[RMDB]
RNA sequence: GGGAACGACUCGAGUAGAGUCGAAAACGGCCUGAAGCUGGCCGCUGGCGGCGAUCAGCACGCGUACGGCGGCGCUGGUACCAAGCCUGGAGGCGGCGGUAACGGCGGUCACUGGCUCGGUAUCUACACCCAAGGUGGUCCCGGUGGACCCGCGUGCGGAGAAUACACACUUCGGUGUGUAUUCUCCAAAAGAAACAACAACAACAAC
Reactivity to 2A3 in 0.01 (KOAc 150mM, MgCl2 10mM, bicine 150mM(pH8.5), 24C), signal-to-noise 1, nucleotides 027 to 156: c000g040g000c000c070u120g100a110a010g010c110u070g090g000c010c010g020c010u000g010g010c020g040g010c060g060a110u030c130a070g000c010a050c000g020c000g020u140a090c030g100g080c000g000g000c010g030c020u020g000g000u000a000c000c000a030a010g000c000c000u020g050g030a200g090g020c120g030g000c120g070g020u200a120a040c050g180g000c050g050g020u040c010a030c060u020g030g000c000u000c010g000g000u040a000u010c030u020a000c040a060c040c000c000a040a080g030g000u050g010g030u040c040c020c020g110g040u120g080g010a010c000c020c000g010c010g000u050g040c030